[RMDB]
RNA sequence: GGGAACGACUCGAGUAGAGUCGAAAAAAAGAUAUGGAGGACUCUACCCACCGUCUCGCAGCGAAGAACUGGUCUCGGAAACGAGACCAGGGAGCUGCCGGAGACGAGGAGUCCUCCUAAGUCAAAAGUUAUGAUACUAGUUCGCUAGUAUCAUAACAAAAGAAACAACAACAACAAC
Reactivity to 2A3 in 0.01 (KOAc 150mM, MgCl2 10mM, bicine 150mM(pH8.5), 24C), signal-to-noise 4, nucleotides 027 to 126: a000a000a040g020a000u040a020u060g000g000a000g000g010a000c000u030c010u060a190c070c100c030a040c010c010g000u000c000u000c010g010c000a000g000c000g240a300a010g000a010a020c000u000g000g000u000c010u000c000g020g000a010a010a010c000g010a000g000a000c010c000a000g000g000g000a010g000c010u010g020c000c030g300g030a020g000a010c000g000a000g000g000a000g000u000c000c000u000c000c000u000a000a010g000u000c010a050a020a130a050
Reactivity to DMS in 0.01 (KOAc 150mM, MgCl2 10mM, bicine 150mM(pH8.5), 24C), signal-to-noise 6, nucleotides 027 to 126: a080a080a130g000a020u000a060u010g010g000a030g020g010a010c000u010c010u000a080c040c050c130a300c030c000g000u000c000u000c000g000c000a000g020c020g000a110a160g000a080a140c020u000g010g000u000c000u000c000g000g000a010a030a040c010g010a020g000a010c000c000a000g000g000g000a040g010c010u000g000c030c190g020g010a030g000a010c000g010a070g000g000a030g000u000c000c000u000c000c000u000a000a070g000u000c010a090a090a140a150